[RMDB]
RNA sequence: GGGAACGACUCGAGUAGAGUCGAAAACGAGGCGGAGAUCGAGCGCCAGUUCGUGCGCGGCGACCUGAAGUUGCUUCGGCUUCUUCUUGUUCGCGUCCUGCGUGGAACGGCUCCUUCUUCACACCAGCCGGAGAUGGAAACUACCCGGUGGAUACAAGAGAUAAGGACUCUUCGGAGUCCUUAUCUCAAAAGAAACAACAACAACAAC
Reactivity to 2A3 in 0.01 (KOAc 150mM, MgCl2 10mM, bicine 150mM(pH8.5), 24C), signal-to-noise 1, nucleotides 027 to 156: c090g010a070g220g000c150g050g000a020g000a020u020c010g010a010g000c010g070c090c030a020g010u010u040c060g020u030g030c000g020c020g010g010c000g000a000c000c000u020g010a020a020g000u000u000g020c000u040u060c190g200g000c000u000u000c020u000u000c010u000u030g130u190u000c000g000c010g050u070c030c030u030g020c020g000u080g020g000a000a000c000g000g000c000u000c010c000u000u020c010u000u000c020a000c000a030c010c030a010g060c000c000g010g010a180g000a050u200g060g080a080a040a060c050u120a120c000c010c030g000g050u040g050g040a030u060a220c120a150a010